[RMDB]
Structure probing data (2A3 and DMS) for a 177-nucleotide construct.
RNA sequence: GGGAACGACUCGAGUAGAGUCGAAAAAGGAUAUGGCCAACCACUGUUCUCCGGUCCGGAUGUGAAUGCCAGCAAUUAGAAAAGCUAGAGGUAAGUUUCACUUUCUCAUUAUAACACUAACCAUGGAGUCUAGAUGUCAUUUCGAUGACAUCUAGACAAAAGAAACAACAACAACAAC
Reactivity to 2A3 in 0.01 (KOAc 150mM, MgCl2 10mM, bicine 150mM(pH8.5), 24C), signal-to-noise 2, nucleotides 027 to 126: a000g130g010a100u160a070u190g020g040c010c010a060a030c010c000a040c040u070g050u120u080c010u070c030c020g030g060u000c040c020g060g030a040u060g040u030g110a120a010u050g000c010c010a010g020c000a050a050u200u090a090g090a150a100a020a010g070c080u040a020g000a030g120g020u040a080a030g040u000u100u090c040a030c000u020u060u020c030u010c000a060u100u180a130u070a140a060c150a020c090u050a120a020c040c030a080u050g020g030a080
Reactivity to DMS in 0.01 (KOAc 150mM, MgCl2 10mM, bicine 150mM(pH8.5), 24C), signal-to-noise 2, nucleotides 027 to 126: a070g000g010a080u000a040u000g010g020c020c010a140a090c040c030a080c080u000g020u000u000c010u000c010c090g000g000u010c030c040g000g000a080u000g010u000g010a060a070u000g000c000c020a050g010c080a070a010u000u000a070g010a110a070a060a140g030c040u000a050g010a070g020g000u000a060a050g020u010u040u000c100a060c030u000u010u000c020u000c040a090u020u000a090u000a080a030c080a050c130u020a070a140c070c040a110u020g000g010a290